The record gives the reactivity of an RNA of 177 nucleotides to DMS and 2A3. Source: RMDB library OK1LIB, as collected in RNAgym. DMS adducts were read by reverse transcription with MarathonRT. Values cover nucleotides 27 to 126. The 2A3 profile rests on 1,497 reads. For 2A3 the reverse transcriptase was SuperScript II with manganese.
RNA sequence: GGGAACGACUCGAGUAGAGUCGAAAAGACGCUGAUGCGAUCGACUGUAAGAUAGAUAGACUGAGCAGACAGAUACGUACGGCAAGUAUCGUCGCCAGAAGUACAGUCGCAAAUUGCCGUACGAAGACCCGGCUAAUACGUUCGCGUAUUAGCCGGGAAAAGAAACAACAACAACAAC
Reactivity to DMS in 0.01 (KOAc 150mM, MgCl2 10mM, bicine 150mM(pH8.5), 24C), signal-to-noise 1, nucleotides 027 to 126: g000a030c060g020c000u000g000a000u150g000c130g080a200u060c000g050a050c000u010g000u000a000a130g000a300u100a100g020a270u050a090g000a300c020u000g000a000g050c020a230g000a150c000a200g000a130u100a210c000g040u000a150c000g000g030c000a000a000g050u020a000u000c060g050u000c020g000c000c000a000g000a110a300g000u050a000c010a030g000u000c000g000c300a050a080a000u060u000g050c110c060g020u020a210c000g000a220a180g010a280
Reactivity to 2A3 in 0.01 (KOAc 150mM, MgCl2 10mM, bicine 150mM(pH8.5), 24C), signal-to-noise 2, nucleotides 027 to 126: g080a010c020g000c040u080g070a100u300g010c030g080a080u050c000g000a000c000u010g040u020a090a000g010a250u220a060g040a060u060a050g140a070c020u000g000a010g080c070a100g030a030c010a000g100a050u090a110c020g020u010a000c000g010g050c010a000a040g000u070a010u110c090g000u000c000g000c000c000a010g070a200a020g050u010a050c000a000g000u020c000g000c010a080a090a000u000u000g000c000c000g010u000a000c050g000a030a000g090a040